Notes
An RNA of 177 nucleotides, treated with 2A3 and DMS and read out base by base.
RNA sequence: GGGAACGACUCGAGUAGAGUCGAAAAGAAUAAAUAGUGUCUUGGAGCGCGCGGCGUAAACAUAUAUGGUUCAUAUAUGUCCGUAGGCACGUAAAGAAAGCGCGUCAAAGCGAGAGAAGACUCGCAAAGGUACUCGUAUAUUCGUAUACGAGUACCUAAAAGAAACAACAACAACAAC
Reactivity to 2A3 in 0.01 (KOAc 150mM, MgCl2 10mM, bicine 150mM(pH8.5), 24C), signal-to-noise 6, nucleotides 027 to 126: g060a020a030u200a110a050a050u160a050g000u000g010u000c020u090u210g210g040a080g000c010g000c000g000c000g020g010c010g020u040a040a030a000c010a000u010a000u010a000u020g300g090u240u220c060a000u000a000u000a000u010g010u010c050c010g000u000a000g000g000c000a000c010g010u050a090a090a000g110a050a090a000g010c010g000c010g000u020c050a050a080a000g000c000g000a010g020a010g030a210a020g060a040c000u000c000g000c000a070a020
Reactivity to DMS in 0.01 (KOAc 150mM, MgCl2 10mM, bicine 150mM(pH8.5), 24C), signal-to-noise 3, nucleotides 027 to 126: g000a140a090u050a030a080a070u040a080g000u000g010u000c030u000u020g010g010a090g010c000g000c010g030c010g000g020c300g010u030a140a060a030c010a010u010a000u000a030u000g000g010u020u060c000a020u010a010u000a010u000g000u010c030c000g000u000a050g010g010c000a010c010g020u030a040a120a060g010a070a080a070g040c000g010c000g000u000c040a100a130a130g000c010g020a030g000a050g010a160a080g000a050c010u000c020g000c000a040a050
It was measured as part of the RMDB library OK1LIB. Reactivities are given for positions 27 through 126. The RNA was probed in 150 mM KOAc, 10 mM MgCl2 and 150 mM bicine (pH 8.5) at 24 C.